[RMDB]
RNA sequence: GGGAACGACUCGAGUAGAGUCGAAAAUGCGUAAGCCAAGGGCAGGCGUGCCGCCAGGGCGUCCGACCUAUCCAGCGCUGCCCGCGCCAACCGUUCGGCAAGCCGGACGUCGCCGAGCCGCAGGGCCACCGCUUUGGUAUUUCGAUACCAAAGCGGUAAAAGAAACAACAACAACAAC
Reactivity to 2A3 in 0.01 (KOAc 150mM, MgCl2 10mM, bicine 150mM(pH8.5), 24C), signal-to-noise 2, nucleotides 027 to 126: u180g000c020g060u100a090a060g030c050c040a070a150g080g000g000c030a040g050g030c030g040u120g070c000c020g070c080c050a060g030g030g000c020g000u060c000c000g050a180c020c010u060a080u160c030c040a010g010c030g000c040u030g000c000c030c020g040c010g000c000c010a040a080c020c020g030u000u020c020g000g020c070a080a030g070c020c010g010g020a020c020g000u020c030g000c080c020g010a040g020c000c000g020c050a060g000g000g010c000c030
Reactivity to DMS in 0.01 (KOAc 150mM, MgCl2 10mM, bicine 150mM(pH8.5), 24C), signal-to-noise 3, nucleotides 027 to 126: u020g020c050g020u010a160a140g000c040c080a130a090g000g000g030c010a080g010g020c060g030u010g000c070c050g000c080c080a070g000g010g010c000g000u000c040c010g000a070c020c030u000a070u000c090c070a130g010c030g010c020u000g000c050c020c000g010c110g000c040c080a080a150c120c050g000u020u010c020g030g020c100a190a150g020c040c000g000g000a010c010g010u000c050g000c030c030g000a090g030c030c030g010c110a090g030g030g010c040c090